Chemical mapping of a 177-nucleotide RNA with DMS and 2A3. It was measured as part of the RMDB library OK2TST. The DMS profile rests on 1,128 reads. Conditions: 150 mM KOAc, 10 mM MgCl2 and 150 mM bicine (pH 8.5), 24 C. For 2A3 the reverse transcriptase was SuperScript II with manganese.
RNA sequence: GGGAACGACUCGAGUAGAGUCGAAAAAUCAAUCACAACUUAUCGGUCAACACGUUACCCAUGUGGAAACGCGUGGUAAGGCGUUGUUAACUCAUUUUUCCAACGACUUAACGCUCUACAGCCAUAAAACACGGCUUUAUUUCGAUAAAGCCGUGUUAAAAGAAACAACAACAACAAC
Reactivity to DMS in 0.01 (KOAc 150mM, MgCl2 10mM, bicine 150mM(pH8.5), 24C), signal-to-noise 2, nucleotides 027 to 126: a070u030c120a100a080u000c080a040c110a050a170c100u000u030a020u000c140g000g000u000c090a050a050c050a000c030g020u000u000a190c130c000c020a090u000g020u030g030g000a030a060a110c100g030c090g030u000g030g010u000a050a020g020g010c000g000u000u010g010u000u000a050a020c300u050c160a180u010u000u040u000u000c030c020a020a080c090g000a040c040u000u000a020a050c040g020c030u000c060u010a040c170a100g020c020c040a110u000a060a090
Reactivity to 2A3 in 0.01 (KOAc 150mM, MgCl2 10mM, bicine 150mM(pH8.5), 24C), signal-to-noise 2, nucleotides 027 to 126: a000u060c030a030a040u080c040a020c040a150a100c060u120u060a070u130c050g000g030u020c010a020a000c010a000c080g030u020u040a110c010c000c000a040u070g020u080g010g000a010a040a040c050g010c020g000u020g020g070u090a090a090g060g030c010g020u030u030g020u050u040a050a060c050u020c210a120u160u040u000u010u000c020c000a040a040c030g020a000c000u020u060a070a010c050g000c010u000c040u060a020c010a050g010c030c020a040u100a060a150